This 207-nucleotide RNA was probed chemically with DMS. Source: RMDB library OK3TST, as collected in RNAgym. The reactions ran in a buffer of 150 mM KOAc, 10 mM MgCl2 and 150 mM bicine (pH 8.5), at 24 C. The DMS profile rests on 2,437 reads.
RNA sequence: GGGAACGACUCGAGUAGAGUCGAAAAUCUGUUGGCUUAGUUGUAAAGUGUUGGAAUUACGGCUUAUAGCCUGACUGACUGACUAAACACUGAAUCAUAAAGCGCUUGACAAGUUGAACAACUUAGUGAUACAUUAGAAAGCAUGUUAGCGAGAGCAAAAUAAUGCCAGGUUCGCCUGGCAUUAUUUAAAAGAAACAACAACAACAAC
Reactivity to DMS in 0.01 (KOAc 150mM, MgCl2 10mM, bicine 150mM(pH8.5), 24C), signal-to-noise 2, nucleotides 027 to 156: u010c040u030g010u010u000g050g000c050u000u010a110g030u000u010g010u000a080a090a150g020u010g020u000u020g020g010a150a190u000u000a130c120g000g000c020u000u000a090u000a180g020c020c010u020g010a110c040u010g010a090c000u010g010a250c020u000a030a080a060c060a100c060u010g000a160a080u010c040a090u000a060a100a080g020c060g020c090u010u000g050a090c020a060a080g070u000u000g020a130a060c050a020a070c010u000u020a140g030u000g000a210u000a060c090a080u000u000a150g010a080a120a090g020c010a080u000g010u000u000a090g040c030g000a150g010a150g020c050a060